[RMDB]
RNA sequence: GGGAACGACUCGAGUAGAGUCGAAAACUAAACAGGGUUUUCACCCUUCCUUUAGUUUCCUUCCUCUCCUGGAGAGGUCUUCUGCCCUAGCCCGGUCUUCGAAGCUUCCUUUGGCUACUACCCGGUGGCAACCAUUAAUGUUCGCAUUAAUGGUUGCAAAAGAAACAACAACAACAAC
Reactivity to DMS in 0.01 (KOAc 150mM, MgCl2 10mM, bicine 150mM(pH8.5), 24C), signal-to-noise 1, nucleotides 027 to 126: c000u000a000a020a010c140a010g000g010g000u000u020u000u020c250a070c010c010c000u000u000c040c030u000u000u000a010g000u000u000u010c090c030u020u010c030c000u010c030u000c020c070u030g030g010a090g000a050g020g010u000c020u020u000c080u000g010c020c020c040u000a120g000c040c040c090g050g000u000c050u000u010c070g000a120a160g010c060u010u000c040c010u000u000u000g000g000c030u000a050c040u000a120c020c000c020g030g000u010g010
Reactivity to 2A3 in 0.01 (KOAc 150mM, MgCl2 10mM, bicine 150mM(pH8.5), 24C), signal-to-noise 1, nucleotides 027 to 126: c020u040a040a010a050c300a260g090g070g010u120u150u300u300c130a070c000c000c000u000u030c000c000u010u010u000a000g020u040u010u070c000c000u110u070c010c010u080c010u030c060c150u130g070g050a040g000a010g000g000u000c030u120u010c040u030g000c000c010c090u040a040g040c000c040c000g020g000u000c050u030u050c050g080a070a030g000c020u050u080c000c000u090u110u080g060g030c000u000a060c000u010a030c020c010c000g010g050u000g080
Structure probing data (DMS and 2A3) for a 177-nucleotide construct. For DMS the reverse transcriptase was MarathonRT. Reactivities are rounded to 0.1 and cut off at 0 and 3. The RNA was probed in 150 mM KOAc, 10 mM MgCl2 and 150 mM bicine (pH 8.5) at 24 C. Source: RMDB library VIROID, as collected in RNAgym.